Background: Source: RMDB library 15KREP, as collected in RNAgym. This 177-nucleotide RNA was probed chemically with 2A3 and DMS. The 2A3 profile rests on 5,546 reads. For DMS, 4,725 sequencing reads were counted.
RNA sequence: GGGAACGACUCGAGUAGAGUCGAAAAAGGACCCCUUCAGCGAACAGAACGAUCGCUUCACGCGGUGGGAGCAAGACCAUAGCGAUAGGAAGAGAUGCUAGGAGUUGGUGGCGACCGGAGCGAGGAGCUAUCCUGUACAGUUCGCUGUACAGGAUAGAAAAGAAACAACAACAACAAC
Reactivity to 2A3 in 0.01 (KOAc 150mM, MgCl2 10mM, bicine 150mM(pH8.5), 24C), signal-to-noise 4, nucleotides 027 to 126: a010g090g050a090c010c000c010c000u030u050c030a030g000c000g030a030a020c010a060g050a090a030c050g040a070u030c020g010c000u030u050c050a040c040g020c020g010g120u060g030g030g010a040g010c040a060a020g070a060c010c010a040u040a010g020c020g090a060u080a080g070g040a040a050g020a010g010a050u110g020c010u030a030g030g040a130g080u090u060g090g080u050g050g010c020g000a020c030c000g020g020a030g010c010g000a030g000g010a010g010
Reactivity to DMS in 0.01 (KOAc 150mM, MgCl2 10mM, bicine 150mM(pH8.5), 24C), signal-to-noise 5, nucleotides 027 to 126: a090g010g010a200c050c010c000c080u000u000c060a060g020c010g010a060a050c070a080g010a090a120c160g000a050u000c060g010c010u000u000c030a120c050g020c020g000g050u000g000g010g010a140g020c110a110a100g000a050c020c010a050u000a070g010c030g010a120u000a090g000g010a070a070g010a100g010a070u010g010c040u000a050g000g010a070g010u000u000g010g020u010g010g000c040g010a080c030c040g010g010a120g010c030g000a050g010g000a100g000